[RMDB]
RNA sequence: GGGAACGACUCGAGUAGAGUCGAAAAGAAAGAAACAUCACCCUAUGGAAAAGAAAGGCAGCCACAUACGAAACCUGAGGAAACAGGAAGCCACAACGUGCGCCAUGUGGUUACCAAAGGGAGAAAAAUAAUAAUCACCGUUCGCGGUGAUUAUUAUAAAAGAAACAACAACAACAAC
Reactivity to 2A3 in 0.01 (KOAc 150mM, MgCl2 10mM, bicine 150mM(pH8.5), 24C), signal-to-noise 2, nucleotides 027 to 126: g090a010a060a000g100a030a150a010c050a060u080c030a030c020c020c010u030a080u090g070g030a090a100a050a080g130a080a100a010g040g010c040a010g000c000c010a020c000a000u120a040c070g100a120a050a050c000c000u040g030a110g030g190a120a030a060c000a020g020g000a010a040g020c020c010a030c010a120a160c170g050u070g000c060g010c030c000a010u020g010u010g000g000u020u030a010c000c000a030a060a040g020g000g030a040g070a020a050a000a000
Reactivity to DMS in 0.01 (KOAc 150mM, MgCl2 10mM, bicine 150mM(pH8.5), 24C), signal-to-noise 4, nucleotides 027 to 126: g000a070a080a050g020a150a080a070c100a090u010c110a090c000c000c020u000a150u010g000g000a090a100a100a080g000a110a080a080g000g000c060a040g010c040c000a030c030a010u000a110c200g000a090a150a090c010c010u020g010a120g010g030a120a150a110c050a010g000g010a080a080g000c070c050a030c100a060a060c140g020u000g040c040g010c070c110a050u030g010u000g000g010u000u010a070c020c000a030a050a080g000g000g010a060g010a000a050a050a090